[RMDB]
RNA sequence: GGGAACGACUCGAGUAGAGUCGAAAAGAGCCAUAGUGGUCUGCGGAACCGGUGAGUACACCGGAAUUGCCGGGAAGACUGGGUCCUUUCUUGGAUAAACCCACUCUAUGCCCGGCAAUUUGGGCAUAGUUACCCGAAUAUUCGUAUUCGGGUAACUAAAAGAAACAACAACAACAAC
Reactivity to 2A3 in 0.01 (KOAc 150mM, MgCl2 10mM, bicine 150mM(pH8.5), 24C), signal-to-noise 9, nucleotides 027 to 126: g060a020g040c030c010a080u110a040g130u110g040g030u050c060u070g040c040g040g010a040a060c000c010g000g000u020g020a140g100u090a050c010a000c000c010g000g000a000a010u000u000g000c000c000g000g000g000a000a000g000a000c010u000g000g010g010u030c010c010u120u230u250c120u160u190g030g000a040u100a110a160a050c010c000c000a010c010u000c000u040a090u260g100c000c000c000g000g000c000a000a010u000u000u000g000g010g000c020a020u030
Reactivity to DMS in 0.01 (KOAc 150mM, MgCl2 10mM, bicine 150mM(pH8.5), 24C), signal-to-noise 6, nucleotides 027 to 126: g010a100g010c050c010a080u010a080g020u010g000g010u010c030u010g000c090g000g000a100a110c010c010g000g010u000g010a240g020u020a110c020a020c000c000g000g000a010a000u000u000g000c010c000g000g000g000a090a010g010a010c100u000g010g000g000u000c020c010u000u050u030c150u040u010g000g010a110u020a090a170a090c010c000c000a010c140u000c000u000a120u040g000c000c000c000g010g000c010a000a000u000u000u010g010g000g010c060a150u010
This 177-nucleotide RNA was probed chemically with 2A3 and DMS. Conditions: 150 mM KOAc, 10 mM MgCl2 and 150 mM bicine (pH 8.5), 24 C. Reactivities are given for positions 27 through 126. 2A3 adducts were read by reverse transcription with SuperScript II with manganese. The data come from the RNA Mapping Database (RMDB), libraries RFM100 and RFMREP.